This 207-nucleotide RNA was probed chemically with 2A3.
For 2A3 the reverse transcriptase was SuperScript II with manganese.
The reactions ran in a buffer of 150 mM KOAc, 10 mM MgCl2 and 150 mM bicine (pH 8.5), at 24 C.
The 2A3 profile rests on 641 reads.

RNA sequence: GGGAACGACUCGAGUAGAGUCGAAAAAGAUCCACGCUACCGCGUGGAUCACACGUUCAUCCCUAUUGGGACGGAAGUAGGCAUAGUGCCGAAGGAACGCAUUAGUCAUGCGCUACGGCGCAUGACACACAUCAGAGUCACUUCGGUGACUCUGAAAGCUCUCUUCAAACUUCGGUUUGAAGAGAGCAAAAGAAACAACAACAACAAC
Reactivity to 2A3 in 0.01 (KOAc 150mM, MgCl2 10mM, bicine 150mM(pH8.5), 24C), signal-to-noise 1, nucleotides 027 to 156: a000g000a000u010c000c000a000c010g020c050u230a210c090c280g000c010g040u000g000g000a010u000c000a000c000a010c000g000u000u000c000a020u020c000c000c010u130a300u150u300g000g000g010a020c010g000g020a010a010g010u030a020g020g000c060a110u070a300g160u180g240c000c000g000a010a000g030g020a050a000c000g020c010a050u050u170a050g020u000c000a000u020g000c000g000c040u010a060c190g060g000c000g000c020a010u000g040a000c000a000c000a000c000a040u060c000a000g000a000g010u000c010a000c000u040u050c100g030g000u000g000a000c000u030c000u010g000a000a000a000